[RMDB]
RNA sequence: GGGAACGACUCGAGUAGAGUCGAAAAGGUCCCCUGGGCCACCGCCUACUCAACCUGGUAUCAUCAGUACAUCACCUUUCCCAUCCAGGCCCUCACCGCCGCCAUUCUGCUUAGGGAAUACACCAUCACCGAUUACGGGACGUACCUCUCCAUCCCAUCGAUUUACGUGAUUCGUCACGUAAAUCGAAAAAGAAACAACAACAACAAC
Reactivity to 2A3 in 0.01 (KOAc 150mM, MgCl2 10mM, bicine 150mM(pH8.5), 24C), signal-to-noise 1, nucleotides 027 to 156: g080g050u030c010c010c000c040u030g020g010g000c000c020a020c030c000g070c000c010u070a050c040u050c060a050a060c000c030u070g030g000u110a040u070c030a010u030c020a060g080u110a090c030a110u090c020a030c040c040u010u080u050c000c000c030a030u100c040c030a030g040g000c030c000c000u040c030a030c050c000g030c020c020g000c020c000a030u070u020c010u040g060c030u060u150a020g010g030g000a030a010u070a040c010a010c040c010a010u110c000a010c080c050g020a010u050u160a110c050g000g000g020a000c070g010u030a050c020c010u030c000u000c020c010a020u010c000c000c000a010